[RMDB]
RNA sequence: GGGAACGACUCGAGUAGAGUCGAAAAGAUAUGGAACGUCAAGACAUGGAGGAUCGGAAACGAUGCUCCAACAGCUUGCGUUCCUAAGUCAAAUCUGAAACCAACGGUUCGCCGUUGGUUUCAGAAAGAGGAAAUGUCUGUUCGCAGACAUUUCCUCAAAAGAAACAACAACAACAAC
Reactivity to DMS in 0.01 (KOAc 150mM, MgCl2 10mM, bicine 150mM(pH8.5), 24C), signal-to-noise 1, nucleotides 027 to 126: g030a000u000a300u000g010g000a000a000c000g000u020c010a000a010g000a080c090a210u000g000g000a020g010g010a010u000c000g000g010a080a060a120c010g000a040u000g000c000u000c000c000a020a020c300a240g010c000u010u000g000c000g000u000u000c000c030u000a030a020g000u000c050a110a130a150u000c000u000g000a030a000a000c000c000a000a010c010g010g020u000u020c220g040c030c000g000u000u000g000g010u000u000u010c010a000g010a000a020a070
Reactivity to 2A3 in 0.01 (KOAc 150mM, MgCl2 10mM, bicine 150mM(pH8.5), 24C), signal-to-noise 1, nucleotides 027 to 126: g030a010u030a060u110g000g000a030a000c020g130u210c300a020a040g060a190c070a060u040g030g000a000g080g010a000u000c000g020g050a030a050a010c020g010a000u040g080c000u010c040c000a010a000c000a000g010c000u000u010g010c000g010u000u020c010c000u010a060a000g020u030c030a000a010a300u040c000u000g000a030a000a000c000c000a000a000c000g070g050u050u070c290g060c110c000g000u000u000g000g000u000u000u000c000a020g000a020a000a000